[RMDB]
RNA sequence: GGGAACGACUCGAGUAGAGUCGAAAACGAGGAGUACUAUUACCACGAUACAGUACACCAUGUCAUAUUUGUACUGUGUCCAGAUGGUCGUAUGACAUGGUGAUCAUCUGGUGGUAAUGGUAUUCCGGCUUCUCGGUGAUUUCGAUCAUUGAGGAGCAAAAGAAACAACAACAACAAC
Reactivity to 2A3 in 0.01 (KOAc 150mM, MgCl2 10mM, bicine 150mM(pH8.5), 24C), signal-to-noise 9, nucleotides 027 to 126: c090g050a090g010g000a000g000u000a000c000u000a000u000u000a000c000c000a000c010g050a050u130a220c040a020g030u030a010c000a000c010c010a010u010g020u010c020a010u020a030u080u170u210g070u120a010c000u020g020u020g100u130c070c020a070g030a160u070g030g000u000c000g010u010a010u020g010a010c010a010u030g010g010u020g010a020u020c020a020u020c010u040g040g000u000g000g000u000a000a000u000g000g000u000a000u000u000c000c000g000
Reactivity to DMS in 0.01 (KOAc 150mM, MgCl2 10mM, bicine 150mM(pH8.5), 24C), signal-to-noise 7, nucleotides 027 to 126: c070g010a150g020g010a020g020u000a010c000u000a000u000u000a000c000c000a010c030g020a280u040a300c050a020g010u010a080c000a010c040c020a010u000g010u000c020a010u010a000u010u010u050g030u040a010c010u000g010u000g000u050c170c190a110g010a020u000g010g000u000c000g020u000a000u000g000a020c020a010u000g000g000u000g010a030u020c090a070u020c000u000g010g000u010g000g010u010a000a000u000g000g010u000a000u000u000c000c000g000